[RMDB]
RNA sequence: GGGAACGACUCGAGUAGAGUCGAAAAGAUAUGGACCUCGACCCAGGCUAUGUACACUAUGAAGUUUCCUUAAUCGGAAACGAUUAAGGAAAUGGAGUGUACAACAAUGCCUGCGAGGUCCUAAGUCCAUGACGAGAAUGUUCGCAUUCUCGUCAUGAAAAGAAACAACAACAACAAC
Reactivity to DMS in 0.01 (KOAc 150mM, MgCl2 10mM, bicine 150mM(pH8.5), 24C), signal-to-noise 3, nucleotides 027 to 126: g000a040u000a080u010g000g000a010c000c000u010c000g010a290c300c300c090a010g000g010c000u000a120u000g000u000a000c010a010c010u000a250u020g010a130a250g000u000u000u000c000c000u010u010a030a000u000c000g000g000a040a010a120c010g000a010u010u000a000a000g000g010a000a000a010u000g020g010a030g020u000g000u000a010c000a030a070c300a120a150u010g000c000c000u000g000c010g000a000g000g020u000c000c000u010a010a090g010u000c020
Reactivity to 2A3 in 0.01 (KOAc 150mM, MgCl2 10mM, bicine 150mM(pH8.5), 24C), signal-to-noise 2, nucleotides 027 to 126: g020a000u040a030u060g000g000a000c000c010u000c020g110a190c060c100c130a020g020g050c020u080a060u270g010u030a000c020a010c040u090a230u300g300a300a170g020u010u000u000c000c000u000u000a000a000u000c010g000g030a000a000a000c010g000a010u000u000a000a000g000g000a010a000a000u020g030g050a020g000u000g000u030a000c000a000a000c060a090a080u300g000c020c010u000g020c000g000a000g030g000u000c010c010u000a010a000g010u000c000
Structure probing data (DMS and 2A3) for a 177-nucleotide construct. For DMS, 3,445 sequencing reads were counted. For 2A3, 4,759 sequencing reads were counted. It was measured as part of the RMDB library TTRINS. The RNA was probed in 150 mM KOAc, 10 mM MgCl2 and 150 mM bicine (pH 8.5) at 24 C. For DMS the reverse transcriptase was MarathonRT.